An RNA of 177 nucleotides, treated with DMS and 2A3 and read out base by base. Reactivities are given for positions 27 through 126. The 2A3 profile rests on 3,800 reads.
[RMDB]
RNA sequence: GGGAACGACUCGAGUAGAGUCGAAAAUUCCAGAGAGGUACUCGUGGCGAGAUGCUGGUGCGGCUAGCUUCUCGAGCCUCUUUGGGGCCUCCAUAAUUCUGUCGGCGACUACCUCUAGGGCACCACGCAGUAUGACUGUGUUCGCACAGUCAUACUGAAAAGAAACAACAACAACAAC
Reactivity to DMS in 0.01 (KOAc 150mM, MgCl2 10mM, bicine 150mM(pH8.5), 24C), signal-to-noise 3, nucleotides 027 to 126: u010u000c000c000a030g010a020g000a030g020g020u010a060c080u000c070g030u000g010g010c040g010a020g000a040u000g010c030u000g010g030u000g020c180g010g000c010u000a030g010c020u000u010c010u000c010g000a130g000c010c010u000c010u000u000u010g010g000g000g000c060c030u000c040c050a080u010a080a090u010u000c090u010g010u000c050g010g010c020g000a060c080u000a070c050c030u000c050u010a090g010g010g000c130a150c030c060a080c130g010
Reactivity to 2A3 in 0.01 (KOAc 150mM, MgCl2 10mM, bicine 150mM(pH8.5), 24C), signal-to-noise 3, nucleotides 027 to 126: u070u020c010c000a000g000a000g000a000g050g030u060a080c020u050c090g080u070g070g020c040g010a030g010a030u040g000c040u050g000g080u130g100c140g150g050c110u010a000g020c000u030u000c020u000c030g010a030g000c000c000u030c000u000u010u020g020g000g020g000c000c010u010c030c010a100u180a220a080u180u110c060u110g070u070c020g020g020c020g040a060c040u050a040c010c000u020c030u100a080g030g020g010c030a030c040c010a030c050g060

2A3 adducts were read by reverse transcription with SuperScript II with manganese. Values are in units of 0.01, from 0 to 300, in steps of 10. The DMS profile rests on 4,254 reads.